[RMDB]
RNA sequence: GGGAACGACUCGAGUAGAGUCGAAAAUUCCUCAGGCUGGAAGGUGCUGUGGGUGACAGCAAGAGCCCUUAGAAUUCAGGGAAGGGAGCAGUCACUUCCAAACGCAGGAAUUCUCAUGAGGAAAGUAGAAUUUUGACUGGGCAUGGUGGCUCACGCCGCUUUAUAUACCCUUCGGGGUAUAUAAAGCAAAAGAAACAACAACAACAAC
Reactivity to 2A3 in 0.01 (KOAc 150mM, MgCl2 10mM, bicine 150mM(pH8.5), 24C), signal-to-noise 5, nucleotides 027 to 156: u040u000c010c000u020c040a030g040g000c020u050g030g030a060a030g030g050u070g020c020u020g020u040g050g050g030u050g030a050c030a020g010c040a090a060g040a020g080c010c000c010u050u030a060g070a220a140u220u120c050a060g030g000g070a030a040g040g030g020a060g010c020a020g040u050c020a010c010u060u010c020c010a060a080a050c070g000c050a020g020g060a000a010u050u010c040u010c030a050u130g040a040g020g080a060a070a000g030u110a030g050a110a080u050u070u070u200g070a070c040u040g000g000g020c030a020u040g020g030u050g060g000c020u040c040a020c030g080c040c010
Reactivity to DMS in 0.01 (KOAc 150mM, MgCl2 10mM, bicine 150mM(pH8.5), 24C), signal-to-noise 2, nucleotides 027 to 156: u010u000c000c000u000c080a090g010g010c030u010g000g010a110a090g030g090u000g000c040u000g010u020g030g010g060u030g020a200c040a070g000c060a070a110g000a200g000c020c010c020u010u000a090g010a150a130u000u000c140a140g000g040g010a110a070g000g010g020a150g040c050a130g010u000c060a090c010u000u000c020c020a070a090a110c110g000c080a110g030g020a020a080u000u000c020u000c030a130u000g010a110g030g000a050a070a130g000u010a090g010a060a150u000u000u000u000g000a070c030u000g020g030g000c030a130u000g000g020u010g030g010c020u000c050a070c090g020c030c040